Structure probing data (2A3 and DMS) for a 207-nucleotide construct.
2A3 adducts were read by reverse transcription with SuperScript II with manganese.
For DMS the reverse transcriptase was MarathonRT.
The RNA was probed in 150 mM KOAc, 10 mM MgCl2 and 150 mM bicine (pH 8.5) at 24 C.
[RMDB]
RNA sequence: GGGAACGACUCGAGUAGAGUCGAAAAGCUGCGUGAAACCUCGCUGUUUUCUUGGCUAACUUUCAGCGAGGUGAGGCAAGGCGGCGAAAAAAAGUUGGGAGCAGCAACGGCAAGCAAAAAAAAAGUUACAAGUUGCGAUGGUUCGCCAUCGCAACAAGAUAAUUAACAUGUUCGCAUGUUAAUUAUCAAAAGAAACAACAACAACAAC
Reactivity to 2A3 in 0.01 (KOAc 150mM, MgCl2 10mM, bicine 150mM(pH8.5), 24C), signal-to-noise 4, nucleotides 027 to 156: g010c010u020g000c020g070u100g040a090a040a020c010c000u010c000g000c000u010g020u000u010u020u000c110u160u170g120g030c080u020a030a010c000u000u020u010c000a000g000c000g000a010g010g000u010g000a000g010g020c040a020a020g080g000c040g000g000c000g070a120a030a010a050a000a000a030g080u090u060g020g020g010a040g000c020a000g000c020a050a020c040g050g000c030a030a060g020c070a020a050a010a000a010a000a010a010a020g010u010u010a020c030a070a070g000u000u010g000c000g000a000u000g000g030u020u060c140g030c090c000a000u000c000g010c000a000a000c000a000a000
Reactivity to DMS in 0.01 (KOAc 150mM, MgCl2 10mM, bicine 150mM(pH8.5), 24C), signal-to-noise 1, nucleotides 027 to 156: g030c000u000g020c030g020u010g030a210a150a070c000c020u010c020g010c010u000g010u000u000u000u000c010u000u000g000g010c100u050a020a020c000u000u000u010c000a010g000c100g020a030g040g020u010g000a000g000g000c060a090a160g000g010c020g000g000c000g010a000a000a070a060a080a080a160g040u010u010g000g050g020a150g000c000a060g000c050a070a040c050g010g000c020a090a150g030c080a000a000a010a000a010a000a020a000a010g010u000u000a070c020a070a130g010u000u000g000c000g010a010u010g000g030u010u000c300g030c000c000a020u000c000g000c000a000a000c000a010a060